[RMDB]
RNA sequence: GGGAACGACUCGAGUAGAGUCGAAAAGCUAUGUUAUGAUGGUGUGAACCAUCAUAGUGUUAGGUACUCGACUAACACACAUAGAUCGAGUAGUGUUCUGUACUGGUGUGAACCAGUACAACAUGUAGUCUACAGUACAUGUGAACACACUGUAGAACGUAGCAUGCUAGUUCGCUAGCAUGCUACGAAAAGAAACAACAACAACAAC
Reactivity to DMS in 0.01 (KOAc 150mM, MgCl2 10mM, bicine 150mM(pH8.5), 24C), signal-to-noise 2, nucleotides 027 to 156: g010c020u000a030u010g040u000u000a010u000g020a020u010g010g030u000g020u010g000a300a050c000c010a010u000c000a000u000a010g010u000g010u000u000a030g030g030u000a050c090u000c050g000a060c010u000a030a060c080a060c130a260c090a030u030a060g010a110u000c030g010a060g000u020a050g040u000g010u000u000c010u010g030u000a010c020u010g010g000u000g030u040g020a240a030c020c000a020g010u000a020c010a120a150c020a010u000g000u000a020g030u000c010u000a060c040a070g030u000a020c050a040u000g040u000g020a050a060c060a050c090a110c020u000g000u000a060g010a080a280
Reactivity to 2A3 in 0.01 (KOAc 150mM, MgCl2 10mM, bicine 150mM(pH8.5), 24C), signal-to-noise 3, nucleotides 027 to 156: g000c010u010a000u020g010u080u010a000u010g000a010u000g000g010u020g010u030g060a020a060c000c000a000u000c000a000u010a000g000u020g020u030u050a010g010g040u030a030c030u020c020g010a020c000u010a080a010c060a000c000a000c010a090u030a010g090a080u030c020g020a010g000u030a050g030u030g040u130u040c040u010g000u000a000c000u000g000g000u010g010u030g060a030a030c000c000a000g000u010a000c000a000a010c010a010u010g000u010a010g010u000c010u020a010c000a000g000u000a000c000a010u010g070u080g200a040a000c040a000c000a000c000u000g010u020a000g010a010a000